Chemical mapping of a 207-nucleotide RNA with 2A3. The reactions ran in a buffer of 150 mM KOAc, 10 mM MgCl2 and 150 mM bicine (pH 8.5), at 24 C.
RNA sequence: GGGAACGACUCGAGUAGAGUCGAAAAGUAGAGUGUAUCAUGUCAGUAAGUAUGCCGGGGAAUGGUGGUUUACCCCGUUAUCAAAUGAUUACCGACCAAUAAUUGGCGAAACUCGUUUCGCGUUGGCAAAGUCACGGCGUGUUCGCACGCCGUGAAACGCAAAAUUAGUCUUCGGACUAAUUUUGCGAAAAGAAACAACAACAACAAC
Reactivity to 2A3 in 0.01 (KOAc 150mM, MgCl2 10mM, bicine 150mM(pH8.5), 24C), signal-to-noise 1, nucleotides 027 to 156: g080u100a030g040a000g050u030g020u050a010u140c050a050u090g070u060c100a000g090u090a110a010g040u030a060u090g010c010c020g010g010g010g030a050a050u060g050g000u020g010g060u000u090u090a090c060c040c000c000g000u030u010a030u010c010a000a000a100u010g020a020u050u040a010c020c020g070a050c070c070a040a000u180a160a050u050u170g100g010c000g000a050a060a060c110u090c020g090u000u020u030c040g000c030g010u010u000g040g010c150a100a060a030g080u000c000a000c000g000g000c000g000u020g000u010u010c090g000c070a000c000g030c000c000g000u000g000a000a000a000